The data come from the RNA Mapping Database (RMDB), library OK1LIB. Structure probing data (2A3) for a 177-nucleotide construct. 2A3 adducts were read by reverse transcription with SuperScript II with manganese. The RNA was probed in 150 mM KOAc, 10 mM MgCl2 and 150 mM bicine (pH 8.5) at 24 C. The 2A3 profile rests on 308 reads.
RNA sequence: GGGAACGACUCGAGUAGAGUCGAAAACUAAACAACAACAACAACAACAACAAAGCGGAUGUCGUCUCAACAUUAUAUACGAACAGUCUUUGCCAUUUGAAGAAGCCCAUCCCUUUGUCAAAUGGAACCUGGCGUGAUCGUUCGCGAUCACGCCAGGAAAAGAAACAACAACAACAAC
Reactivity to 2A3 in 0.01 (KOAc 150mM, MgCl2 10mM, bicine 150mM(pH8.5), 24C), signal-to-noise 1, nucleotides 027 to 126: c000u130a070a170a050c190a230a000c000a000a020c000a000a000c000a240a040c000a020a000c000a000a000c000a100a040a040g080c000g000g000a060u090g050u240c050g000u000c000u000c090a130a240c120a300u180u230a020u000a000u120a020c190g000a170a000c100a070g100u000c180u010u120u080g000c080c120a170u040u040u010g250a290a200g070a000a000g000c000c000c000a030u010c000c000c030u040u090u000g260u000c000a000a000a050u000g000g070a000a000